[RMDB]
Structure probing data (2A3 and DMS) for a 177-nucleotide construct. For 2A3, 3,364 sequencing reads were counted. For 2A3 the reverse transcriptase was SuperScript II with manganese. Conditions: 150 mM KOAc, 10 mM MgCl2 and 150 mM bicine (pH 8.5), 24 C.
RNA sequence: GGGAACGACUCGAGUAGAGUCGAAAAGAUAUGGACCGACAUGUAGCCCAUCGGAAACGAUGGAAGCGUAGAGAUGUUCGGUCCUAAGUCAAACCCGACUAGUGGGGUUCGCCCCACUAGUCGGGAAGGUAAUAACGCUGUUCGCAGCGUUAUUACCAAAAGAAACAACAACAACAAC
Reactivity to 2A3 in 0.01 (KOAc 150mM, MgCl2 10mM, bicine 150mM(pH8.5), 24C), signal-to-noise 2, nucleotides 027 to 126: g030a020u110a040u130g010g000a010c000c000g000a000c000a020u100g090u230a030g020c000c000c000a000u010c010g000g040a120a030a050c020g010a010u000g010g100a190a080g030c030g120u300a100g000a010g010a260u060g090u230u130c000g040g000u000c010c000u000a050a010g020u020c010a030a000a130c000c000c020g000a000c010u010a000g000u000g030g020g020g070u040u080c200g060c020c000c010c000a000c000u010a000g000u000c010g030g010g000a000a000
Reactivity to DMS in 0.01 (KOAc 150mM, MgCl2 10mM, bicine 150mM(pH8.5), 24C), signal-to-noise 1, nucleotides 027 to 126: g000a100u000a300u010g030g000a030c000c000g000a030c000a010u020g020u000a190g000c050c020c000a000u010c000g000g000a120a050a160c020g000a030u010g000g000a070a070g020c020g020u020a070g010a150g000a010u000g000u020u000c010g000g020u000c010c000u000a000a070g030u010c020a100a080a120c010c000c000g000a000c010u000a010g050u000g000g030g000g000u010u040c230g010c020c000c000c000a010c010u010a000g000u010c010g000g000g000a010a010